Background
Chemical mapping of a 177-nucleotide RNA with DMS. Source: RMDB library TTRINS, as collected in RNAgym. DMS adducts were read by reverse transcription with MarathonRT. The RNA was probed in 150 mM KOAc, 10 mM MgCl2 and 150 mM bicine (pH 8.5) at 24 C.
RNA sequence: GGGAACGACUCGAGUAGAGUCGAAAAGAUAUGGAUUCUAACUCUCUGACAGCGAGCAAGCCGACCCAUCGGAAACGAUGGGCGGUGAUGACCUCGAACUACUGUCAGAGAGUUAGAAUCCUAAGUCCGCUAUACAAAUGUUCGCAUUUGUAUAGCGAAAAGAAACAACAACAACAAC
Reactivity to DMS in 0.01 (KOAc 150mM, MgCl2 10mM, bicine 150mM(pH8.5), 24C), signal-to-noise 2, nucleotides 027 to 126: g010a060u020a300u000g030g000a040u000u000c000u000a010a000c000u000c000u000c000u020g000a020c000a010g000c010g000a010g040c060a170a300g000c010c000g000a210c000c030c000a000u000c000g010g040a190a100a190c010g030a020u010g010g010g020c010g000g000u000g010a060u010g000a090c300c010u000c000g010a120a030c090u020a300c010u000g000u000c000a000g000a000g000a010g000u000u000a000g000a000a000u010c000c000u000a020a080g000u010c040